This 207-nucleotide RNA was probed chemically with 2A3 and DMS. For 2A3, 2,400 sequencing reads were counted. Reactivities are given for positions 27 through 156. The RNA was probed in 150 mM KOAc, 10 mM MgCl2 and 150 mM bicine (pH 8.5) at 24 C. It was measured as part of the RMDB library OK3TST.
[RMDB]
RNA sequence: GGGAACGACUCGAGUAGAGUCGAAAAAGCUUACUACAGCGUCGUUACUGUAGGACGAACGUACGGAAACCAUCCCGUUAGAUGGUGUGGUCGUCCGCGGUAAUGAGCCCAUCCGAAACGUACGAUCUAUAGAACGCCUGUAAGGUCCAUCCGAAACCAGUAGCUUGACAUUCGUGUCAAGCUACUGAAAAGAAACAACAACAACAAC
Reactivity to 2A3 in 0.01 (KOAc 150mM, MgCl2 10mM, bicine 150mM(pH8.5), 24C), signal-to-noise 4, nucleotides 027 to 156: a010g080c040u080u090a090c080u110a030c070a020g000c010g030u080c000g010u050u010a060c000u010g090u110a270g030g010a000c010g020a130a010c020g050u180a050c020g060g000a140a110a020c000c000a020u010c000c050c030g160u140u090a080g010a040u060g040g020u080g020u060g100g060u010c020g000u000c020c000g000c000g000g000u030a040a040u020g010a030g030c020c020c000a060u080c010c040g090a140a060a090c030g040u040a000c030g030a080u000c030u040a040u020a090g060a150a070c070g040c020c000u080g050u090a090a080g010g030u010c020c000a040u040c060c070g010a060a020a030c030
Reactivity to DMS in 0.01 (KOAc 150mM, MgCl2 10mM, bicine 150mM(pH8.5), 24C), signal-to-noise 1, nucleotides 027 to 156: a150g020c060u010u000a130c040u010a080c040a040g030c050g060u000c150g020u010u000a010c020u000g020u000a120g040g000a090c010g030a090a020c000g050u000a210c040g000g020a230a120a050c010c000a010u000c040c010c300g000u010u000a050g010a010u000g010g000u020g010u020g060g000u000c000g030u000c000c020g000c030g010g000u010a020a030u000g020a160g000c010c010c010a090u000c020c020g020a080a050a110c050g020u000a080c030g000a150u000c030u000a150u010a080g000a090a070c010g010c040c010u000g040u030a090a080g000g010u030c010c000a070u000c050c050g000a070a120a140c200